[RMDB]
RNA sequence: GGGAACGACUCGAGUAGAGUCGAAAAGAAAGAAAAGUAUGUCGCCGUAGAGCUGGGGUUUCAAAGCGGCAUGUGCCUCCAGUCAUGCAAUGCCCUUGGAAAUCCCAAACGUGCUGGCGACCGCUAACUACGUCUCGUGUUUCGACACGAGACGUAGAAAAGAAACAACAACAACAAC
Reactivity to DMS in 0.01 (KOAc 150mM, MgCl2 10mM, bicine 150mM(pH8.5), 24C), signal-to-noise 1, nucleotides 027 to 126: g040a150a110a080g000a160a050a030a060g010u000a160u050g000u000c020g000c000c000g040u000a080g000a050g030c300u000g000g000g030g000u000u000u000c000a060a000a000g000c160g030g030c000a000u040g010u000g040c030c000u030c100c190a070g000u070c120a100u000g010c020a100a000u010g000c000c000c000u000u010g000g000a000a000a000u010c010c000c000a010a010a040c070g000u000g000c080u040g030g000c030g060a010c000c100g000c030u000a160a160
Reactivity to 2A3 in 0.01 (KOAc 150mM, MgCl2 10mM, bicine 150mM(pH8.5), 24C), signal-to-noise 3, nucleotides 027 to 126: g040a010a030a020g130a040a140a010a000g090u030a050u240g000u000c010g000c010c000g040u080a010g010a020g140c020u010g010g000g000g000u020u000u000c010a010a000a020g010c120g050g040c030a010u070g070u030g060c010c060u060c040c000a080g060u170c020a040u050g030c000a010a010u010g010c000c010c000u000u030g000g020a000a000a000u000c000c010c000a000a020a020c030g040u090g010c060u120g000g010c010g000a000c000c000g010c000u090a120a080
Structure probing data (DMS and 2A3) for a 177-nucleotide construct. High 2A3 reactivity points to a flexible backbone, as in loops and unpaired stretches. The RNA was probed in 150 mM KOAc, 10 mM MgCl2 and 150 mM bicine (pH 8.5) at 24 C. The 2A3 profile rests on 2,004 reads. For DMS, 1,541 sequencing reads were counted. DMS adducts were read by reverse transcription with MarathonRT. For 2A3 the reverse transcriptase was SuperScript II with manganese.